Chemical mapping of a 177-nucleotide RNA with DMS and 2A3. Conditions: 150 mM KOAc, 10 mM MgCl2 and 150 mM bicine (pH 8.5), 24 C. Source: RMDB library OK2TRN, as collected in RNAgym.
RNA sequence: GGGAACGACUCGAGUAGAGUCGAAAAGGCUCAAGGCUUCUUGCAAGGUUACAAGCCCUAAAAAUUUGCGAGUAUAAUUGCUAGGGUGCCAUGCGUGGUUUUGCACGCUGUUUUUACUAUAAUUGCCCUGGCUCUCCUUAUUCGUAAGGAGAGCCAGAAAAGAAACAACAACAACAAC
Reactivity to DMS in 0.01 (KOAc 150mM, MgCl2 10mM, bicine 150mM(pH8.5), 24C), signal-to-noise 2, nucleotides 027 to 126: g000g000c020u010c090a090a080g030g040c020u010u010c010u000u000g040c090a070a040g020g020u000u000a080c170a090a200g010c000c050c050u000a020a080a190a100a050u000u000u000g000c060g030a240g020u000a040u000a040a050u000u000g010c240u000a030g020g010g010u010g000c130c050a040u000g010c010g040u000g010g020u020u020u010u010g000c090a010c080g000c000u010g000u000u000u010u010u000a050c190u000a070u010a050a060u020u020g000c050c040
Reactivity to 2A3 in 0.01 (KOAc 150mM, MgCl2 10mM, bicine 150mM(pH8.5), 24C), signal-to-noise 1, nucleotides 027 to 126: g020g030c040u030c130a010a150g030g010c030u090u080c000u060u000g010c000a010a070g000g060u050u110a170c060a090a080g060c060c000c020u100a090a090a050a050a070u020u110u220g000c050g030a010g010u080a220u060a300a180u000u090g000c010u020a000g000g000g050u030g060c000c080a060u080g000c030g030u040g030g070u000u100u190u290g070c020a010c030g000c020u010g070u000u100u050u050u090a040c060u090a080u080a300a110u080u160g030c000c030
DMS adducts were read by reverse transcription with MarathonRT.